[RMDB]
RNA sequence: GGGAACGACUCGAGUAGAGUCGAAAAGAUAUGGACUCCGGAGCUUUUGACGGCUCAACAUCGGAAACGAUGUUCGAGCCGAUAAGCUCCAGGAGUCCUAAGUCAAAAGGCCCUCUUCGGAGGGCCACUUACAAAAUGAGUUCGCUCAUUUUGUAAGAAAAGAAACAACAACAACAAC
Reactivity to DMS in 0.01 (KOAc 150mM, MgCl2 10mM, bicine 150mM(pH8.5), 24C), signal-to-noise 3, nucleotides 027 to 126: g000a040u000a300u010g000g000a030c000u000c000c010g000g000a030g000c000u000u000u020u000g020a240c150g010g000c000u000c000a030a000c000a000u000c000g000g010a060a060a120c000g000a000u000g010u010u000c180g020a000g010c010c000g030a010u000a010a030g000c000u010c000c000a040g040g000a010g010u010c000c000u000a010a100g020u010c030a090a080a120a110g030g010c000c000c000u000c000u000u020c170g010g010a010g010g000g020c000c010a000
Reactivity to 2A3 in 0.01 (KOAc 150mM, MgCl2 10mM, bicine 150mM(pH8.5), 24C), signal-to-noise 1, nucleotides 027 to 126: g010a010u060a000u090g000g010a010c000u010c000c000g000g010a010g000c020u120u300u300u300g260a270c150g020g000c000u010c000a000a000c000a000u000c010g000g000a000a010a030c000g000a000u000g000u020u070c160g020a000g000c000c000g010a000u000a020a010g020c000u000c000c010a000g000g040a000g000u010c000c010u000a010a000g000u000c000a000a050a000a120g010g000c000c090c000u000c020u050u050c200g200g020a010g020g000g000c000c000a000